This 177-nucleotide RNA was probed chemically with 2A3 and DMS. For DMS the reverse transcriptase was MarathonRT. Values cover nucleotides 27 to 126. The 2A3 profile rests on 17,653 reads. Source: RMDB library M2PK50, as collected in RNAgym.
RNA sequence: GGGAACGACUCGAGUAGAGUCGAAAAUCCCCAUAGUUCGCUAUGGGGAAAAGCCGUACCGCGUAGCACGCGGAUUGGAGCGAAGAUAUCCACGGCACGCGAAAACCUUCGCCUUCGGGCGAAGGAACAUGUAGAAUGGGUUCGCCCAUUCUACAUGAAAAGAAACAACAACAACAAC
Reactivity to 2A3 in 0.01 (KOAc 150mM, MgCl2 10mM, bicine 150mM(pH8.5), 24C), signal-to-noise 7, nucleotides 027 to 126: u000c000c000c000c000a000u010a010g020u030u040c210g010c090u000a000u000g000g000g000g010a040a030a040a000g040c010c000g030u090a100c050c020g000c000g030u030a060g060c100a080c240g010c010g010g010a010u020u120g090g060a100g110c120g080a120a020g040a200u130a040u090c010c010a010c010g000g000c020a010c020g030c010g040a040a030a020a130c000c000u000u000c000g000c000c000u040u080c220g100g000g000c000g000a000a000g000g000a000a000
Reactivity to DMS in 0.01 (KOAc 150mM, MgCl2 10mM, bicine 150mM(pH8.5), 24C), signal-to-noise 6, nucleotides 027 to 126: u000c000c000c000c010a010u010a010g020u000u010c180g030c000u000a000u000g000g000g000g000a000a010a040a080g000c010c010g010u010a100c140c020g010c000g010u000a130g020c040a270c010g020c030g010g010a060u000u000g000g010a150g010c170g020a100a110g010a120u000a050u000c000c000a040c010g010g000c010a050c030g010c030g010a100a070a090a140c000c000u000u000c000g010c000c000u000u000c180g020g010g000c010g000a010a000g010g000a030a050